[RMDB]
RNA sequence: GGGAACGACUCGAGUAGAGUCGAAAAUGUGAAAUGUAAAUAUGUCCCACUGCUCAAUUUUUAACGGGACUCCAGGUUUUAGUUACUUAUUAUGAAAUGUAAAUUUGGUUCCUUUGGAAAACAACAAAUCUACCGAUACCUUCGGGUAUCGGUAGAUAAAAGAAACAACAACAACAAC
Reactivity to DMS in 0.01 (KOAc 150mM, MgCl2 10mM, bicine 150mM(pH8.5), 24C), signal-to-noise 1, nucleotides 027 to 126: u000g030u020g000a090a080a030u030g010u000a020a100a060u000a130u010g000u000c000c000c000a190c160u040g000c120u050c080a110a020u040u080u020u040u000a070a190c280g000g050g000a010c180u010c070c100a070g000g000u000u000u000u000a000g010u000u020a020c040u000u000a140u110u000a160u000g000a080a070a000u000g000u000a110a010a010u000u020u000g010g000u000u010c000c000u000u000u010g020g000a040a010a050a080c090a020a030c170a000a020
Reactivity to 2A3 in 0.01 (KOAc 150mM, MgCl2 10mM, bicine 150mM(pH8.5), 24C), signal-to-noise 2, nucleotides 027 to 126: u140g030u010g100a080a190a150u140g060u130a000a190a120u100a080u090g040u050c030c050c000a000c000u030g000c030u060c170a110a180u010u090u070u190u300a040a070c010g000g000g000a000c040u070c080c000a000g000g000u000u000u000u050a050g050u020u040a040c000u070u090a090u170u080a140u250g150a140a020a000u130g000u090a000a000a060u000u030u010g010g000u030u110c000c000u090u010u030g030g040a000a010a000a110c040a010a010c020a010a150